[RMDB]
RNA sequence: GGGAACGACUCGAGUAGAGUCGAAAAUGGGGCUCUAAUCUACCAAGUCAUUGUCUGAAAAGGCAUGAUGGCCUGAGGUAAUAACUCAGGAUAUGGUUACAACGAUUAGAGAUGUUACAAUGUAUGAUUCGCAGCCCAAUCCCUCAAUAUGGGAUCACAAGAGUAGACGGUUCGCCGUCUACUCUUGAAAAGAAACAACAACAACAAC
Reactivity to 2A3 in 0.01 (KOAc 150mM, MgCl2 10mM, bicine 150mM(pH8.5), 24C), signal-to-noise 3, nucleotides 027 to 156: u080g000g000g000g000c000u010c000u000a000a000u010c000u010a000c010c050a000a000g000u000c010a020u100u300g000u000c010u000g030a100a080a030a010g000g010c000a000u010g000a000u030g000g010c000c000u020g010a010g000g000u060a050a110u130a230a040c000u000c000a000g000g000a020u120a110u180g000g000u010u000a010c020a040a010c080g030a000u010u010a000g000a000g010a020u080g040u090u120a060c090a110a080u050g020u040a060u070g010a030u030u000c020g000c060a030g040c000c000c000a000a040u010c010c020c020u020c040a070a060u130a080u150g060g000g000a000u010c000a020
Reactivity to DMS in 0.01 (KOAc 150mM, MgCl2 10mM, bicine 150mM(pH8.5), 24C), signal-to-noise 2, nucleotides 027 to 156: u000g020g020g010g030c000u000c000u010a030a000u000c010u000a070c000c010a080a270g010u000c010a000u010u020g050u000c000u000g000a140a080a230a020g050g000c010a010u010g000a020u000g040g010c010c010u010g000a020g020g000u000a190a120u000a090a130c000u000c000a000g000g000a040u000a070u000g020g040u000u000a090c080a030a090c140g000a030u000u000a020g010a020g010a180u000g020u000u000a100c070a100a060u000g030u000a090u000g010a080u000u000c040g000c060a060g000c010c000c010a050a050u000c000c010c010u000c050a090a140u000a120u010g000g010g020a010u000c020a140

This 207-nucleotide RNA was probed chemically with 2A3 and DMS.
Values cover nucleotides 27 to 156.
The 2A3 profile rests on 1,792 reads.
The reactions ran in a buffer of 150 mM KOAc, 10 mM MgCl2 and 150 mM bicine (pH 8.5), at 24 C.